[RMDB]
RNA sequence: GGGAACGACUCGAGUAGAGUCGAAAAGACUGAGUUCGCUCAGUCAAAAAAGGGGUCAUCGAUGAGGGAUACAAGCUGAUGACCCUGAAGCCUCCACGGGCAAGGCUUGAUCCCGAGAUGACGGAGGCACCCAAAAAGCGUAGGUUCGCCUACGCAACCACCUCCGAUUCUUCGGAAUCGGAGGUGGAAAAGAAACAACAACAACAAC
Reactivity to 2A3 in 0.01 (KOAc 150mM, MgCl2 10mM, bicine 150mM(pH8.5), 24C), signal-to-noise 1, nucleotides 027 to 156: g010a000c000u010g000a010g040u190u160c230g060c210u000c000a000g010u090c070a000a000a000a000a080a100g050g000g020g000u000c000a000u000c010g260a160u110g060a160g060g120g000a100u190a300c070a160a040g020c080u100g070a000u060g010a040c000c000c000u000g000a000a000g030c000c000u030c040c010a040c080g000g000g000c170a080a040g160g060c000u070u060g070a060u080c000c000c000g010a030g010a090u160g070a040c140g000g030a000g020g020c000a040c000c000c000a030a030a050a030a030g000c010g010u000a000g090g000u030u030c280g020c070c000u000a070c060g040c000a000a100